An RNA of 207 nucleotides, treated with 2A3 and read out base by base. The 2A3 profile rests on 830 reads. The RNA was probed in 150 mM KOAc, 10 mM MgCl2 and 150 mM bicine (pH 8.5) at 24 C. 2A3 adducts were read by reverse transcription with SuperScript II with manganese.
RNA sequence: GGGAACGACUCGAGUAGAGUCGAAAACUUGUUGUUCGCAACAAGGGCGUGGGGUCGAGCUAGCCUCUUCGCGAGGAUCGUACUGAAGCCUCCACGGUACGGGAGCGAAUGCUUGGACCUCGACGGAGGCACCCGGUAAGUAAACUUCGGUUUACAAUCUCAUAGGUACGUUCGCGUACCUAUGAGAAAAAGAAACAACAACAACAAC
Reactivity to 2A3 in 0.01 (KOAc 150mM, MgCl2 10mM, bicine 150mM(pH8.5), 24C), signal-to-noise 1, nucleotides 027 to 156: c000u030u010g000u060u000g030u100u070c160g000c130a000a040c000a110a120g050g030g000c130g210u300g000g000g000g000u000c010g020a090g060c060u040a070g060c140c000u160c100u090u030c080g010c030g000a210g000g010a000u000c010g000u010a030c000u040g010a130a010g050c000c000u000c000c000a000c000g000g000u000a000c000g000g000g000a020g010c030g040a110a080u230g020c010u060u080g240g010a140c030c000u000c000g020a040c120g000g000a000g000g000c000a000c000c000c000g030g080u150a250a000g000u000a000a160a000c010u030u120c200g140g020u060u040u040a020c000a030a080